An RNA of 177 nucleotides, treated with DMS and 2A3 and read out base by base. DMS adducts were read by reverse transcription with MarathonRT. Reactivities are given for positions 27 through 126.
[RMDB]
RNA sequence: GGGAACGACUCGAGUAGAGUCGAAAACAUCAGCAGUAGCCUUGCAGCGGUCAGUUUAAUGCUUCCUUUGAGCACCUUUGCAGACACCAAUACUAAACCUGUCGCUGUUGAUUCUAUUGAUAUUAAAUGCUACGUCCAUAUUCGUAUGGACGUAGCAAAAAGAAACAACAACAACAAC
Reactivity to DMS in 0.01 (KOAc 150mM, MgCl2 10mM, bicine 150mM(pH8.5), 24C), signal-to-noise 1, nucleotides 027 to 126: c040a120u000c080a100g000c060a080g060u000a030g020c150c120u000u000g000c040a040g030c050g030g000u020c040a040g000u000u000u010a040a110u000g010c020u000u010c060c100u010u000u020g030a060g020c070a050c140c080u020u010u020g000c020a090g000a120c060a080c110c040a040a010u000a040c080u000a030a110a100c110c030u000g010u000c030g000c040u000g010u000u000g010a060u010u000c030u000a070u000u010g020a100u000a090u010u000a080a080a120
Reactivity to 2A3 in 0.01 (KOAc 150mM, MgCl2 10mM, bicine 150mM(pH8.5), 24C), signal-to-noise 1, nucleotides 027 to 126: c030a060u090c030a000g020c000a000g000u050a030g000c000c000u090u100g090c010a000g000c030g000g080u130c010a000g000u010u040u040a080a030u100g040c000u060u140c020c000u040u070u110g000a000g000c010a060c010c050u090u070u170g000c000a040g000a080c010a050c030c030a020a100u150a180c090u080a010a050a090c060c000u040g010u000c010g000c000u000g000u070u050g010a000u150u060c010u050a050u110u030g100a110u070a160u300u300a020a230a140

The RNA was probed in 150 mM KOAc, 10 mM MgCl2 and 150 mM bicine (pH 8.5) at 24 C. The 2A3 profile rests on 757 reads.